The record gives the reactivity of an RNA of 207 nucleotides to 2A3 and DMS. The 2A3 profile rests on 3,363 reads. The reactions ran in a buffer of 150 mM KOAc, 10 mM MgCl2 and 150 mM bicine (pH 8.5), at 24 C. 2A3 adducts were read by reverse transcription with SuperScript II with manganese. In probing experiments dimethyl sulfate is read out at A N1 and C N3, which are open when not base-paired.
RNA sequence: GGGAACGACUCGAGUAGAGUCGAAAAAGUUCUAGUCCUCACCUAAGAUCAGACUAACAAGGCCCUCAAAGGAAGAGCACUUGGUUGGGCUUUGUGGUGGGGAUUAGUGUCUCAUUUUUAGUCCCAAAUUAAAAACGAGAUUUUGGGCUGUACAUCAUAUAGCAUUAUUAUUCGUAAUAAUGCUAUAAAAAGAAACAACAACAACAAC
Reactivity to 2A3 in 0.01 (KOAc 150mM, MgCl2 10mM, bicine 150mM(pH8.5), 24C), signal-to-noise 4, nucleotides 027 to 156: a000g070u100u020c000u000a000g000u000c000c010u000c000a000c000c020u100a100a040g050a130u180c120a060g170a230c060u100a050a010c040a000a000g000g000c000c020c000u040c040a080a070a010g080g010a070a080g070a030g120c060a030c070u020u010g050g010u100u060g020g000g000c000u000u010u010g030u020g000g000u010g000g000g010g000a000u000u000a000g010u000g040u010c010u020c030a050u010u170u120u050u230a030g090u150c010c000c010a030a010a020u050u060a050a040a030a040a040c120g020a100g010a170u030u030u010u030g000g000g000c010u050g060u140a070c020a100u090c050a030
Reactivity to DMS in 0.01 (KOAc 150mM, MgCl2 10mM, bicine 150mM(pH8.5), 24C), signal-to-noise 3, nucleotides 027 to 156: a100g010u010u000c010u000a000g010u000c000c000u000c020a050c020c000u020a110a100g020a110u000c120a180g010a160c100u000a120a140c030a040a030g000g000c010c020c000u000c030a060a060a090g020g000a120a150g010a190g020c130a090c020u000u010g020g030u000u000g000g010g000c010u000u000u000g040u010g020g040u010g000g000g010g000a020u000u000a010g020u000g020u010c010u000c010a050u000u000u000u000u000a020g010u000c030c040c070a050a050a110u010u000a020a020a020a040a040c030g010a050g000a180u000u000u000u000g010g000g020c060u000g010u010a080c120a150u000c050a300